[RMDB]
RNA sequence: GGGAACGACUCGAGUAGAGUCGAAAAUGAGUGAUGUGUUUGGGUCUAUGGGAAGGUUGGUGACCCCCAAAGAGAGGUGGCUGGGUUACUGCUGAACAGCUAUCAGGGUGAUAUGGCUUUGCAGGGGCGCCAUCGUAAUAUUCGUAUUACGAUGGCGAAAAGAAACAACAACAACAAC
Reactivity to 2A3 in 0.01 (KOAc 150mM, MgCl2 10mM, bicine 150mM(pH8.5), 24C), signal-to-noise 2, nucleotides 027 to 126: u190g000a040g040u090g030a060u060g140u020g030u070u060u080g060g000g000u000c040u090a090u080g010g020g010a070a140g070g010u090u110g000g000u040g040a060c000c000c000c010c030a020a090a000g100a030g000a040g070g010u070g000g000c030u000g040g000g050u050u080a030c030u050g090c000u030g020a100a030c020a030g020c000u010a030u080c040a030g060g010g040u050g020a040u030a130u170g020g020c000u010u020u100g000c020a020g010g020g010g020
Reactivity to DMS in 0.01 (KOAc 150mM, MgCl2 10mM, bicine 150mM(pH8.5), 24C), signal-to-noise 2, nucleotides 027 to 126: u010g010a070g020u000g010a060u000g020u010g020u000u010u010g000g010g010u000c050u010a090u010g020g000g010a070a110g000g010u000u000g010g020u010g010a230c020c010c000c000c020a050a090a110g010a130g000a090g000g000u000g020g000c040u000g020g010g020u000u010a070c070u000g000c040u010g020a080a080c120a050g000c060u000a040u000c060a090g000g010g020u010g010a110u010a080u000g020g000c060u000u000u000g030c080a040g000g010g000g000

Conditions: 150 mM KOAc, 10 mM MgCl2 and 150 mM bicine (pH 8.5), 24 C. The record gives the reactivity of an RNA of 177 nucleotides to 2A3 and DMS. DMS adducts were read by reverse transcription with MarathonRT. The DMS profile rests on 3,168 reads.